[RMDB]
Structure probing data (DMS and 2A3) for a 207-nucleotide construct. The 2A3 profile rests on 10,754 reads. Conditions: 150 mM KOAc, 10 mM MgCl2 and 150 mM bicine (pH 8.5), 24 C. For DMS, 5,684 sequencing reads were counted.
RNA sequence: GGGAACGACUCGAGUAGAGUCGAAAAGGGGUCCUGGACCACGAUCCCAGACAGCAUAUACUUUUGACGAGCUGAAGCCUCCACGGCUCGAUAAGUAUAUGUCGAGAUCGUGACCCAGGACGGAGGCACCCAAAAUGCUGACGUUCGCGUCAGCAAACAUAGCUAUUAACUUCGGUUAAUAGCUAUGAAAAGAAACAACAACAACAAC
Reactivity to DMS in 0.01 (KOAc 150mM, MgCl2 10mM, bicine 150mM(pH8.5), 24C), signal-to-noise 3, nucleotides 027 to 156: g000g020g050g010u000c000c000u010g000g020a020c010c010a040c010g000a040u020c010c190c050a300g040a090c300a130g000c010a030u000a020u000a010c010u000u000u000u010g020a280c180g020a040g000c010u000g010a070a110g010c040c010u000c010c020a300c010g000g040c000u050c000g030a150u010a010a050g020u000a020u000a010u000g010u000c040g000a030g010a010u000c010g010u000g010a050c020c000c000a000g000g010a020c030g010g030a020g030g040c010a140c020c020c010a060a080a100a120u000g010c000u000g000a040c020g060u000u000c300g020c080g030u000c010a010g000c000a010a030a130
Reactivity to 2A3 in 0.01 (KOAc 150mM, MgCl2 10mM, bicine 150mM(pH8.5), 24C), signal-to-noise 6, nucleotides 027 to 156: g040g000g010g000u010c000c000u000g000g020a020c040c000a010c010g000a000u000c020c020c010a020g090a030c050a010g030c020a000u010a000u000a020c010u110u130u230u260g260a140c050g000a000g000c000u020g040a090a010g030c000c010u030c010c010a040c020g010g010c000u010c010g070a070u060a170a020g000u000a000u010a010u020g020u060c060g010a080g010a080u000c000g000u000g020a020c020c000c010a000g000g000a000c010g000g000a000g000g010c010a040c000c010c000a010a120a050a020u120g000c010u000g000a010c000g040u080u080c250g020c010g090u020c000a000g000c000a000a000a000